Annotation
Chemical mapping of a 207-nucleotide RNA with 2A3 and DMS. For DMS, 3,292 sequencing reads were counted. 2A3 adducts were read by reverse transcription with SuperScript II with manganese. Conditions: 150 mM KOAc, 10 mM MgCl2 and 150 mM bicine (pH 8.5), 24 C. For DMS the reverse transcriptase was MarathonRT. Reactivities are rounded to 0.1 and cut off at 0 and 3.

[RMDB]
RNA sequence: GGGAACGACUCGAGUAGAGUCGAAAAUAGUAAGAGAGAAGUCACAUUGUCUCUGUUUGCAGGUGACAUGGUUGUAGAUUUAGAAAACCCCAUCAUCUCAGCCCAGAAACUCCUUAAGCUAAUAAGUAACUUCAGCAAAAUUUCAGGAUUCAAAAUAAUCACUAGUAGUAUUCGUACUACUAGUGAUAAAAGAAACAACAACAACAAC
Reactivity to 2A3 in 0.01 (KOAc 150mM, MgCl2 10mM, bicine 150mM(pH8.5), 24C), signal-to-noise 2, nucleotides 027 to 156: u130a020g100u070a220a010g040a010g000a010g020a170a020g060u080c020a030c010a090u020u040g050u000c020u010c050u160g100u090u060u110g010c030a030g010g020u020g020a010c020a050u040g010g000u030u020g030u110a060g010a180u090u150u050a060g040a070a090a010a010c010c000c000c000a000u020c000a010u000c010u000c010a020g030c030c020c010a020g080a050a090a030c020u010c010c010u060u050a020a050g000c000u010a060a040u080a170a050g100u060a070a070c040u070u100c020a030g000c020a030a100a080a170u080u170u100c030a030g070g020a030u000u090c050a110a100a020a100u090a040
Reactivity to DMS in 0.01 (KOAc 150mM, MgCl2 10mM, bicine 150mM(pH8.5), 24C), signal-to-noise 2, nucleotides 027 to 156: u000a090g020u000a090a150g000a150g000a060g010a090a060g020u010c050a080c100a090u000u020g010u030c060u020c040u010g000u000u000u000g010c050a100g050g010u000g010a040c020a150u000g010g030u000u000g010u000a070g000a110u010u010u010a110g010a140a100a070a110c050c020c140c060a150u000c060a060u000c010u000c030a050g000c040c040c020a180g010a080a120a120c020u000c020c010u020u000a030a180g020c050u000a050a120u010a080a170g020u000a050a020c030u000u000c010a030g020c020a050a090a070a160u010u000u010c050a040g000g020a170u000u000c060a050a020a050a120u000a160